[RMDB]
RNA sequence: GGGAACGACUCGAGUAGAGUCGAAAAUCAUACUCAUAUCAUCACCAUUGUCAUUACUGCGCAUUGAUCCUUUUUGAUGGAUGGCAUCUUUGUACAAAGGUAGACUUGCAUUAAAUACAAUGCCAUGACUCGGGGAAAGGUUCGCCUUUCCCCGAGUAAAAGAAACAACAACAACAAC
Reactivity to DMS in 0.01 (KOAc 150mM, MgCl2 10mM, bicine 150mM(pH8.5), 24C), signal-to-noise 1, nucleotides 027 to 126: u010c090a080u010a150c090u020c000a030u000a100u000c030a060u000c040a020c020c040a060u000u000g030u000c090a100u000u010a080c180u000g000c070g000c060a030u000u000g010a050u000c050c110u000u000u000u040u000g010a090u000g000g000a040u000g000g010c020a040u000c040u000u000u010g030u000a060c230a000a010a020g000g030u000a090g000a110c070u000u000g000c030a040u000u000a030a030a100u000a070c060a000a030u000g010c020c080a040u000g000
Reactivity to 2A3 in 0.01 (KOAc 150mM, MgCl2 10mM, bicine 150mM(pH8.5), 24C), signal-to-noise 1, nucleotides 027 to 126: u050c000a040u030a100c010u000c070a030u040a070u140c030a000u020c010a000c050c000a090u040u040g050u110c000a000u000u090a090c050u020g070c050g030c060a050u000u040g170a110u120c010c040u050u140u000u210u200g100a110u060g050g050a010u050g020g000c000a010u030c030u040u080u120g100u050a010c050a040a090a000g020g000u070a060g070a040c000u010u100g060c010a050u000u070a040a040a040u070a070c090a010a000u030g010c000c010a040u060g050